Conditions: 150 mM KOAc, 10 mM MgCl2 and 150 mM bicine (pH 8.5), 24 C. Structure probing data (2A3) for a 177-nucleotide construct. 2A3 adducts were read by reverse transcription with SuperScript II with manganese. It was measured as part of the RMDB library OK1LIB.

RNA sequence: GGGAACGACUCGAGUAGAGUCGAAAAAGCGCGCUUAUUGCUGACACGGUCAUCCGCAACCGCAAUGAUCGUCAGUAUCUGCAGCGUGUGAUCAACGAUGCCGGAAAAAUUGACGAUGUGCUGAACAUCUCGCUCUGACGUUCGCGUCAGAGCGAGAAAAAGAAACAACAACAACAAC
Reactivity to 2A3 in 0.01 (KOAc 150mM, MgCl2 10mM, bicine 150mM(pH8.5), 24C), signal-to-noise 1, nucleotides 027 to 126: a030g010c010g000c000g000c000u080u140a120u000u280g000c000u030g030a030c020a030c090g040g010u000c020a060u000c000c190g030c070a100a160c040c190g000c000a000a110u010g020a020u020c000g010u000c000a000g010u080a140u040c010u030g000c000a090g000c070g000u010g050u100g030a110u150c010a010a000c140g010a000u030g090c100c000g080g070a040a060a000a000a000u000u190g010a080c030g000a040u060g030u030g020c000u010g000a000a050c000a110